[RMDB]
RNA sequence: GGGAACGACUCGAGUAGAGUCGAAAAGAGCGAUUAGACAAAGGGGUAGAGCUACAUAUUAGAUAGCUGUAUAAUCGUUCAAGUUACAUCAAAACAUCUUCAAUAUUUAUUACUUACUUCCCUUUCUGCCAGAGUACGGUAUUCGUACCGUACUCAAGGCUAAGGACCAGUUCGCUGGUCCUUAGCCAAAAGAAACAACAACAACAAC
Reactivity to 2A3 in 0.01 (KOAc 150mM, MgCl2 10mM, bicine 150mM(pH8.5), 24C), signal-to-noise 2, nucleotides 027 to 156: g000a020g000c060g000a000u010u020a000g050a030c030a060a070a080g000g080g010g080u130a060g020a000g180c020u030a000c000a000u300a170u100u290a250g180a290u020a000g000c000u010g030u050a080u010a000a000u000c000g000u000u000c000a010a010g000u030u140a110c070a200u190c080a040a170a000a070c020a090u060c080u200u080c080a110a110u130a160u140u130u000a110u120u080a060c000u040u020a020c030u020u040c000c000c000u000u050u000c020u060g110c040c050a020g000a000g000u000a000c000g000g000u010a010u010u070c020g000u000a000c000c020g020u000a010c000u020c000a000a000